RNA sequence: GGGAACGACUCGAGUAGAGUCGAAAAGGGGGUUUUAUAUGUGCAUUUGGAGAACUAAAUGUCAGAGCAACAUUCAGAUGUAGGAAACUGAAGCUCCAGAAGUGUAAGUAACUAGCUAAUGCUGUAGCUUUUAGCAUUUAUUCGUAAAUGCUAAAAGAAAAGAAACAACAACAACAAC
Reactivity to DMS in 0.01 (KOAc 150mM, MgCl2 10mM, bicine 150mM(pH8.5), 24C), signal-to-noise 9, nucleotides 027 to 126: g020g010g000g010g010u010u010u020u020a060u020a080u030g020u030g000c020a040u010u010u010g000g010a130g000a120a130c080u010a030a050a060u020g010u020c070a090g010a110g010c080a070a060c100a100u010u000c090a020g010a060u020g010u010a070g010g000a090a100a070c060u010g000a090a170g000c020u000c020c090a080g020a050a050g010u010g000u010a080a050g010u000a030a140c040u000a030g000c020u010a040a050u010g010c060u000g010u010a060g010
Reactivity to 2A3 in 0.01 (KOAc 150mM, MgCl2 10mM, bicine 150mM(pH8.5), 24C), signal-to-noise 9, nucleotides 027 to 126: g050g000g000g010g010u040u020u080u060a170u040a070u160g110u060g010c030a030u010u020u070g070g020a120g030a150a060c050u100a090a040a090u120g030u080c040a010g000a010g120c040a020a070c000a040u020u080c030a020g020a070u090g080u140a030g060g100a080a090a010c010u010g030a040a010g020c000u000c020c020a070g050a180a040g140u130g020u150a060a050g020u010a040a030c040u010a040g050c020u060a070a050u130g010c030u040g050u080a070g020